RNA sequence: GGGAACGACUCGAGUAGAGUCGAAAAAUUUAGCUCCUGUGUGGAUGUCCUUUAUGAUUUUAGAGGUCAUAGUAAAAGAUGGAGGCCUCUAGCAAGCUGCAGCAUGGCAGGGCUGGAAAUAGAUGUUGAAGCAAAGGGAAGGAGGAAGGCACCAAGGUACGAACAUACUUUUCGAAGUAUGUUCGUAAAAAGAAACAACAACAACAAC
Reactivity to 2A3 in 0.01 (KOAc 150mM, MgCl2 10mM, bicine 150mM(pH8.5), 24C), signal-to-noise 2, nucleotides 027 to 156: a000u080u130u060a030g010c040u030c010c020u040g020u020g060u090g100g040a030u010g050u060c030c020u060u130u110a140u160g140a140u060u140u080u100a010g000a010g040g000u010c020a070u060a080g070u070a110a120a140a100g070a070u160g050g020a040g010g010c010c000u000c000u010a010g000c040a050a020g000c010u070g030c020a010g000c010a060u050g050g000c000a000g070g000g040c050u020g040g010a020a050a050u070a030g060a040u100g020u090u050g020a060a030g000c020a060a020a090g000g000g000a040a000g030g000a010g020g010a010a010g020g000c030a000c050c020a060a010g070g040
Reactivity to DMS in 0.01 (KOAc 150mM, MgCl2 10mM, bicine 150mM(pH8.5), 24C), signal-to-noise 2, nucleotides 027 to 156: a090u000u010u000a150g020c010u000c000c040u010g040u000g010u000g000g000a100u010g000u000c100c030u020u000u010a050u020g010a130u000u000u000u010a080g010a090g020g020u000c010a070u010a170g020u000a070a070a100a190g010a150u000g030g020a230g010g000c010c000u010c030u000a030g030c050a080a080g000c050u000g000c020a060g000c060a110u000g020g020c040a070g020g000g050c050u010g010g000a070a080a100u000a080g020a090u010g010u000u000g010a080a110g000c130a040a080a120g000g030g000a060a070g020g020a080g010g010a040a040g010g000c020a080c030c020a050a080g030g020
Chemical mapping of a 207-nucleotide RNA with 2A3 and DMS. Conditions: 150 mM KOAc, 10 mM MgCl2 and 150 mM bicine (pH 8.5), 24 C. DMS (dimethyl sulfate) methylates the pairing face of unpaired adenines and cytosines. The data come from the RNA Mapping Database (RMDB), library OK3TST.